[RMDB]
RNA sequence: GGGAACGACUCGAGUAGAGUCGAAAAUAUCCUGCGUUCGCGCAGGAUACAGCACAAAACUGGGAGGGCGCGCACUCGGAGACAAAACAAAAAGCGAAGCAAGUGAGCUUAGAUUCGUCUAAGCUAAGCAUAGCAUCUAGUUCGCUAGAUGCUAUGCAAAAGAAACAACAACAACAAC
Reactivity to DMS in 0.01 (KOAc 150mM, MgCl2 10mM, bicine 150mM(pH8.5), 24C), signal-to-noise 2, nucleotides 027 to 126: u000a000u000c000c000u000g010c000g010u010u000c270g000c020g050c000a000g000g020a010u000a010c080a080g000c070a100c100a110a090a030a080c080u010g000g010g010a050g000g010g010c050g000c060g000c040a060c070u000c020g030g020a110g010a070c100a000a050a080a050c130a050a090a060a150a060g000c070g000a110a090g020c110a090a040g020u000g000a040g000c010u000u000a000g000a050u000u010c190g020u000c000u000a000a000g010c010u000a020a110
Reactivity to 2A3 in 0.01 (KOAc 150mM, MgCl2 10mM, bicine 150mM(pH8.5), 24C), signal-to-noise 1, nucleotides 027 to 126: u050a000u000c000c010u010g000c000g010u010u070c250g000c000g000c090a000g000g000a000u010a010c010a000g050c030a010c020a070a120a130a050c030u060g000g070g020a030g000g060g000c030g000c010g000c040a020c030u030c040g050g000a030g020a020c070a000a100a070a020c070a010a130a000a020a020g030c040g070a040a020g040c030a080a000g060u160g180a000g010c000u000u010a000g000a010u040u010c130g030u020c140u000a000a000g020c010u040a060a020